[RMDB]
RNA sequence: GGGAACGACUCGAGUAGAGUCGAAAAGGAGAGGAAAGUACAAUAUAACACAACAUUUGUAAUUGUGUUAUCUGAUAACAAUUAUGGUGAUUGUGUAUUCUUCUCAUAUUGUUUAUUCAAGUAGAAAGUUCAGAUCAGUGUUCGCACUGAUUUGAACAAAAGAAACAACAACAACAAC
Reactivity to 2A3 in 0.01 (KOAc 150mM, MgCl2 10mM, bicine 150mM(pH8.5), 24C), signal-to-noise 6, nucleotides 027 to 126: g110g000a010g000a000g030g040a050a030a010g100u110a040c030a040a060u100a020u070a160a000c000a000c000a000a000c000a010u070u070u290g020u010a000a010u000u010g010u020g020u100u100a090u060c080u100g090a040u020a120a000c000a000a000u000u000a000u030g010g000u020g060a300u000u010g000u000g010u010a050u010u030c010u010u000c010u000c020a010u030a010u020u020g010u010u020u040a090u030u150c050a070a040g040u050a040g170a060a120a020
Reactivity to DMS in 0.01 (KOAc 150mM, MgCl2 10mM, bicine 150mM(pH8.5), 24C), signal-to-noise 7, nucleotides 027 to 126: g010g000a010g000a010g000g010a020a030a150g020u030a140c160a080a110u040a080u030a100a040c010a010c010a000a020c020a030u010u020u060g050u000a010a030u000u000g010u000g000u010u020a060u030c220u020g000a070u030a070a020c010a010a010u000u000a030u010g010g010u010g000a100u000u000g000u000g010u000a120u000u000c010u000u000c000u000c000a070u020a100u010u010g010u000u010u020a120u020u010c090a040a110g020u030a090g010a100a080a100

Structure probing data (2A3 and DMS) for a 177-nucleotide construct. DMS adducts were read by reverse transcription with MarathonRT. The DMS profile rests on 23,437 reads. Values cover nucleotides 27 to 126. Conditions: 150 mM KOAc, 10 mM MgCl2 and 150 mM bicine (pH 8.5), 24 C.